The record gives the reactivity of an RNA of 170 nucleotides to 2A3 and DMS.
The reactions ran in a buffer of 150 mM KOAc, 10 mM MgCl2 and 150 mM bicine (pH 8.5), at 24 C.
The data come from the RNA Mapping Database (RMDB), library 15KLIB.
[RMDB]
RNA sequence: GGGAACGACUCGAGUAGAGUCGAAAACGAACGGAAGAGACUGGAAGCCCCAGAGGAAGACCAUAGCCAUGGGGAGAGAUGCUAGGAGUGGGGGGCGACCGGAACGAGGAGAAAAGUAAAGAGAGCAUGACAGGAAGGUUCGCCUUCCUGAAAAGAAACAACAACAACAAC
Reactivity to 2A3 in 0.01 (KOAc 150mM, MgCl2 10mM, bicine 150mM(pH8.5), 24C), signal-to-noise 9, nucleotides 027 to 129: c020g050a030a000c040g020g030a040a000g040a020g040a080c050u070g020g040a030a030g020c000c000c000c020a030g040a050g040g010a020a010g020a010c010c020a090u100a030g040c030c020a070u110g010g000g030g000a020g000a010g010a010u100g030c060u070a040g010g040a030g040u130g000g020g000g010g000g000c020g030a030c000c010g010g010a030a020c020g000a010g000g020a020g000a030a090a010a010g080u150a010a060a000g090a010g000a000g010c070a050u130g060a060
Reactivity to DMS in 0.01 (KOAc 150mM, MgCl2 10mM, bicine 150mM(pH8.5), 24C), signal-to-noise 9, nucleotides 027 to 129: c050g000a070a080c090g000g000a010a010g020a030g020a100c080u050g010g030a100a150g000c050c030c040c070a090g000a070g000g040a050a040g030a100c110c110a070u010a060g030c060c090a080u040g040g020g040g010a030g020a090g020a060u060g020c040u050a080g030g020a080g010u030g010g000g000g010g000g000c100g020a050c000c030g020g040a050a040c070g000a000g040g020a040g000a030a040a030a020g010u070a070a080a050g020a030g010a050g000c080a100u060g020a270